Chemical mapping of a 177-nucleotide RNA with DMS and 2A3. For 2A3, 1,571 sequencing reads were counted. Conditions: 150 mM KOAc, 10 mM MgCl2 and 150 mM bicine (pH 8.5), 24 C. 2A3 adducts were read by reverse transcription with SuperScript II with manganese. The DMS profile rests on 1,391 reads. The data come from the RNA Mapping Database (RMDB), library OK1LIB.
[RMDB]
RNA sequence: GGGAACGACUCGAGUAGAGUCGAAAAUCGUGAGAUGUGGUGCCUCACGCGCUCGAGGCGUCCGUGGUCAGAGAGACCACUGACGCAAAAACUCGAGCGCAAAUAAAAUGCAUUACAUUCAGAAUAACCACUCGAUUAUGUUCGCAUAAUCGAGUGGAAAAGAAACAACAACAACAAC
Reactivity to DMS in 0.01 (KOAc 150mM, MgCl2 10mM, bicine 150mM(pH8.5), 24C), signal-to-noise 1, nucleotides 027 to 126: u040c140g000u070g000a130g000a110u000g020u000g010g000u000g000c030c000u000c190a120c200g040c000g040c000u000c000g000a000g000g000c000g000u000c000c160g000u000g010g020u000c000a080g000a280g000a150g000a010c040c050a030c000u000g000a000c000g030c030a070a020a050a110a290c000u000c000g000a010g000c020g020c010a000a070a050u000a050a050a050a130u030g000c000a000u000u000a000c010a090u000u000c100a060g040a030a040u090a030a040
Reactivity to 2A3 in 0.01 (KOAc 150mM, MgCl2 10mM, bicine 150mM(pH8.5), 24C), signal-to-noise 2, nucleotides 027 to 126: u060c020g010u020g010a120g000a030u100g000u000g010g030u030g010c000c010u050c000a080c120g000c000g000c000u000c000g000a000g000g000c000g000u000c030c000g000u020g000g000u010c060a070g090a070g030a000g000a300c010c000a000c000u000g000a000c000g000c000a050a110a060a040a050c000u010c000g010a000g000c000g000c000a000a000a000u070a000a080a000a040u060g030c000a000u000u020a020c000a000u040u110c050a030g130a190a100u170a120a050